[RMDB]
RNA sequence: GGGAACGACUCGAGUAGAGUCGAAAAGAUAUGGAAUGCCGAAAUUAGCACCGACUAUUCGGAAACGAACGAAUCGGUGAACUACUAAAUAAGGCAUUCCUAAGUCAAACCCUCCUUCGGGAGGGAAGAUAUUGACCACGUUCGCGUGGUCAAUAUCAAAAGAAACAACAACAACAAC
Reactivity to 2A3 in 0.01 (KOAc 150mM, MgCl2 10mM, bicine 150mM(pH8.5), 24C), signal-to-noise 1, nucleotides 027 to 126: g000a000u070a020u120g020g000a010a000u020g040c020c020g070a150a130a080u060u020a000g000c020a010c020c000g000a000c060u110a040u030u010c020g040g050a200a100a110c040g020a060a010c070g000a160a300u020c020g050g000u010g000a050a010c020u110a020c010u020a090a050a060u110a060a040g000g000c000a000u000u000c000c000u020a010a000g000u000c010a010a030a180c000c000c000u010c010c010u050u080c270g140g000g000a000g000g000g020a000a020
Reactivity to DMS in 0.01 (KOAc 150mM, MgCl2 10mM, bicine 150mM(pH8.5), 24C), signal-to-noise 2, nucleotides 027 to 126: g000a020u000a300u010g010g010a010a010u000g000c010c000g010a100a180a160u000u000a010g050c010a010c060c000g010a000c100u000a300u010u010c000g020g020a090a090a050c000g010a000a020c110g010a120a060u000c020g000g000u000g010a030a040c110u010a300c030u000a000a000a030u010a080a240g000g010c000a040u000u000c000c030u000a020a120g050u000c050a050a070a120c010c000c000u010c000c000u010u000c180g000g030g010a010g000g000g010a000a000

The record gives the reactivity of an RNA of 177 nucleotides to 2A3 and DMS.
The 2A3 profile rests on 1,887 reads.
The RNA was probed in 150 mM KOAc, 10 mM MgCl2 and 150 mM bicine (pH 8.5) at 24 C.
It was measured as part of the RMDB library TTRDEL.